[RMDB]
RNA sequence: GGGAACGACUCGAGUAGAGUCGAAAAGAUAUGGAGAUUUAGCUUCCAACAGCUCGGAAACGAGACAUGGAAUUUAACUGUCUCCUAAGUCAAAACUCAUGCGUCUGCUUCGGCAGACGCAUGAGAAGUGACGUUAAAAGUUCGCUUUUAACGUCACAAAAGAAACAACAACAACAAC
Reactivity to 2A3 in 0.01 (KOAc 150mM, MgCl2 10mM, bicine 150mM(pH8.5), 24C), signal-to-noise 2, nucleotides 027 to 126: g030a030u080a030u130g030g010a010g020a030u030u100u120a040g000c010u020u000c010c030a050a090c060a120g030c000u000c000g010g050a030a080a060c010g020a010g010a020c030a050u090g000g000a010a030u040u050u070a130a100c090u100g030u060c000u000c010c000u020a140a020g050u030c030a000a010a070a190c010u020c010a010u020g000c000g010u000c010u040g050c030u090u120c300g080g040c010a020g000a000c000g000c000a020u000g000a000g000a020a010
Reactivity to DMS in 0.01 (KOAc 150mM, MgCl2 10mM, bicine 150mM(pH8.5), 24C), signal-to-noise 3, nucleotides 027 to 126: g000a060u020a300u010g000g000a000g000a010u000u000u010a010g000c100u000u010c000c010a030a060c250a230g000c000u010c010g000g000a180a100a170c000g010a010g000a020c080a140u000g010g010a020a010u000u000u010a000a040c300u000g020u000c000u000c000c000u010a080a120g010u000c020a080a130a120a160c010u000c010a030u000g030c010g010u000c000u000g010c010u000u000c300g040g020c020a010g010a000c000g010c000a020u000g000a000g000a010a060

Source: RMDB library TTRDEL, as collected in RNAgym. This 177-nucleotide RNA was probed chemically with 2A3 and DMS. The 2A3 profile rests on 3,874 reads.